[RMDB]
RNA sequence: GGGAACGACUCGAGUAGAGUCGAAAAAUCAAGAUAAAGAGCACGGCGCACUCGAACCAGCUCAUCAUUUAGUGCUAUCGCUUCCAGUGCUUCCUGUUGGCUUGAAUCUACAUCAAUCAGCAAGGGACAUGCAAUCCGAAUUCGUUCGGAUUGCAUGAAAAGAAACAACAACAACAAC
Reactivity to 2A3 in 0.01 (KOAc 150mM, MgCl2 10mM, bicine 150mM(pH8.5), 24C), signal-to-noise 2, nucleotides 027 to 126: a000u080c040a020a050g030a060u180a090a130a010g120a000g060c000a010c140g030g000c000g050c030a020c010u040c040g020a030a030c020c030a020g020c020u020c010a050u080c020a030u140u150u230a060g010u010g000c010u050a010u100c010g010c090u020u030c010c020a020g000u030g000c000u090u070c000c010u160g040u170u020g030g000c040u000u030g020a020a010u000c030u060a050c020a090u100c010a000a080u050c000a020g060c010a030a030g130g040g030a030
Reactivity to DMS in 0.01 (KOAc 150mM, MgCl2 10mM, bicine 150mM(pH8.5), 24C), signal-to-noise 2, nucleotides 027 to 126: a110u000c080a100a060g010a120u010a020a130a140g000a050g030c010a030c090g030g030c300g000c030a030c020u000c110g010a040a070c040c080a150g010c010u000c030a040u000c130a100u000u000u000a100g040u010g010c000u000a070u000c100g000c180u000u000c030c040a000g010u010g000c030u010u000c000c010u000g010u000u010g000g020c060u000u000g020a060a050u010c010u000a040c130a100u000c110a090a060u000c060a050g000c030a020a050g000g020g010a230

Notes:
The data come from the RNA Mapping Database (RMDB), library OK2TST. Chemical mapping of a 177-nucleotide RNA with 2A3 and DMS. As a SHAPE reagent, 2A3 marks flexible, mostly unpaired nucleotides at the ribose 2'-OH. The reactions ran in a buffer of 150 mM KOAc, 10 mM MgCl2 and 150 mM bicine (pH 8.5), at 24 C.